This 177-nucleotide RNA was probed chemically with 2A3. 2A3 adducts were read by reverse transcription with SuperScript II with manganese. It was measured as part of the RMDB library OK2TRN.
[RMDB]
RNA sequence: GGGAACGACUCGAGUAGAGUCGAAAACUCGACCGCAUGGGCCGGUCGUGGUCGGUCCGUGCCAACCUGCACUUCUUGUGGCUGCGGCUGGCCAGGGUGUGGCCGGUGUACCUGGUCACCUUGCACCCUGCUCUACGCUCUUCGGAGCGUAGAGCAGAAAAGAAACAACAACAACAAC
Reactivity to 2A3 in 0.01 (KOAc 150mM, MgCl2 10mM, bicine 150mM(pH8.5), 24C), signal-to-noise 1, nucleotides 027 to 126: c010u000c000g100a050c040c110g120c050a010u130g020g030g000c050c000g000g060u000c000g140u030g000g000u040c030g000g040u000c030c080g010u010g000c000c000a240a230c030c110u120g010c050a050c060u160u100c050u100u260g130u170g110g000c030u050g010c010g030g030c000u040g000g160c000c020a040g060g090g000u190g010u030g040g000c070c000g030g080u120g060u120a110c040c000u020g010g000u000c020a010c020c000u010u190g040c000a020c000c050